The record gives the reactivity of an RNA of 177 nucleotides to 2A3 and DMS. The RNA was probed in 150 mM KOAc, 10 mM MgCl2 and 150 mM bicine (pH 8.5) at 24 C. High DMS reactivity at an A or C suggests that its Watson-Crick edge is free. For DMS, 58,474 sequencing reads were counted.

RNA sequence: GGGAACGACUCGAGUAGAGUCGAAAAGGAUGUGAGGAAGGUACUAUGUACUUUGUGCCUAGAGCUAAGUCUGUUGUCUCAAGGAUUGGAGACUCCAUCUUUACAGGCUGUACUGGCUCUUGGAACAGAACUAUAUAAUGUUCGCAUUAUAUAGUUCAAAAGAAACAACAACAACAAC
Reactivity to 2A3 in 0.01 (KOAc 150mM, MgCl2 10mM, bicine 150mM(pH8.5), 24C), signal-to-noise 9, nucleotides 027 to 126: g030g010a030u070g070u150g070a040g030g050a100a040g060g020u030a030c040u100a080u230g040u030a040c000u090u110u110g040u060g040c000c000u010a000g000a000g010c010u040a040a000g010u000c010u010g040u050u040g040u030c010u010c040a040a070g100g030a110u110u270g090g020a090g040a070c020u000c010c010a040u010c000u020u050u010a010c010a000g000g000c000u030g050u140a090c110u090g030g010c000u000c000u010u030g020g000a030a000c020a040
Reactivity to DMS in 0.01 (KOAc 150mM, MgCl2 10mM, bicine 150mM(pH8.5), 24C), signal-to-noise 9, nucleotides 027 to 126: g010g000a020u000g010u010g010a070g010g010a120a060g010g010u000a030c050u010a130u010g020u000a050c050u000u000u010g020u000g000c000c000u000a020g010a020g010c010u000a060a030g010u000c020u000g010u000u000g010u000c020u000c040a130a110g010g010a130u010u010g020g010a160g010a120c060u000c020c010a020u000c020u000u000u000a040c030a010g000g000c010u000g010u000a080c300u000g000g000c010u000c000u000u000g000g000a060a030c070a120